[RMDB]
RNA sequence: GGGAACGACUCGAGUAGAGUCGAAAACGCUGGGAUGAGUAGGACGGAUACAGGGAGUACAACAAUGCUGAAGCGCGCACGGCAUUGUUGUACUUUGAUCUGUAGCCGUCCGCAGAUACAUCCUGUGCUGAAGCGCGCACGGCAACCGAAAGGUGCGGUAAGCACCUUUGUUCGCAAAGGUGCUUACAAAAGAAACAACAACAACAAC
Reactivity to 2A3 in 0.01 (KOAc 150mM, MgCl2 10mM, bicine 150mM(pH8.5), 24C), signal-to-noise 3, nucleotides 027 to 156: c070g020c010u050g010g000g010a000u000g000a010g040u080a120g030g000a000c000g000g000a000u000a000c000a000g000g010g000a020g010u000a000c000a000a000c000a010a000u000g000c000u010g020a250a070g010c010g020c010g020c010a020c040g000g000c000a000u000u000g000u000u000g000u000a000c000u040u040u010g010a000u000c000u000g000u000a000g000c010c000g000u020c010c000g010c020a000g010a000u010a000c000a000u000c000c010u060g080u070g030c030u110g020a060a020g000c000g020c010g000c010a010c010g090g010c040a150a180c010c020g030a110a040a020g010g010u030g010c030g020
Reactivity to DMS in 0.01 (KOAc 150mM, MgCl2 10mM, bicine 150mM(pH8.5), 24C), signal-to-noise 1, nucleotides 027 to 156: c140g000c050u010g010g000g040a040u000g000a070g050u000a050g010g010a060c010g020g020a030u010a010c010a000g000g010g000a010g030u000a010c000a010a030c010a010a030u010g000c020u000g010a020a080g040c020g030c010g000c010a300c000g040g000c010a000u000u000g000u000u000g000u000a000c000u000u010u000g010a010u000c000u000g000u000a010g000c000c080g010u000c000c010g000c070a100g000a110u000a060c010a040u000c010c000u000g030u000g000c010u010g000a140a080g020c020g000c020g020c000a040c020g000g020c020a070a130c020c020g000a130a140a150g000g030u010g000c030g000

The data come from the RNA Mapping Database (RMDB), library RNAMAK.
This 207-nucleotide RNA was probed chemically with 2A3 and DMS.
2A3 adducts were read by reverse transcription with SuperScript II with manganese.
For DMS the reverse transcriptase was MarathonRT.
The RNA was probed in 150 mM KOAc, 10 mM MgCl2 and 150 mM bicine (pH 8.5) at 24 C.
Values cover nucleotides 27 to 156.